[RMDB]
RNA sequence: GGGAACGACUCGAGUAGAGUCGAAAAAGGGACACCUCACUCACAUUUUACCAACAGAGUGAGAGUGAGGUUAACCUCUCAUUUCUGUUGGUGAACGCAGAAGUUAGAGGUUGAGAACACUGACUACUGCGUUCAUAGUAGUGAGUGUUCUGUCCCACGAGGCAAAAUUAUUCGUAAUUUUGCCUCGAAAAGAAACAACAACAACAAC
Reactivity to 2A3 in 0.01 (KOAc 150mM, MgCl2 10mM, bicine 150mM(pH8.5), 24C), signal-to-noise 6, nucleotides 027 to 156: a000g010g000g000a000c010a010c010c050u020c000a000c000u060c000a050c020a080u150u210u110u190a030c000c010a010a000c010a010g000a000g010u010g000a010g010a000g020u110g020a110g110g090u070u080a030a030c030c000u000c000u000c000a040u150u300u010c000u000g010u000u010g000g010u020g000a010a000c000g000c020a000g000a060a010g040u020u040a040g040a160g090g070u050u120g110a080g050a050a000c020a000c020u010g030a010c000u080a010c000u020g020c000g030u020u020c020a010u070a010g050u020a000g000u000g010a000g010u010g000u000u000c010u010g020u000c000c000c000a000
Reactivity to DMS in 0.01 (KOAc 150mM, MgCl2 10mM, bicine 150mM(pH8.5), 24C), signal-to-noise 1, nucleotides 027 to 156: a100g010g060g040a060c030a060c030c000u000c000a020c000u000c020a180c030a170u000u000u000u000a300c110c040a060a050c060a040g000a030g010u000g000a020g000a020g030u000g010a090g010g010u010u010a040a110c100c000u030c010u000c020a010u000u000u000c000u000g020u000u020g020g030u000g000a050a060c090g000c010a070g000a170a030g000u000u000a010g000a190g000g030u000u000g010a150g000a050a120c000a090c010u000g000a020c000u000a090c000u010g010c150g010u000u000c060a060u000a070g000u030a080g020u000g000a040g040u000g040u000u010c010u000g020u000c010c030c010a090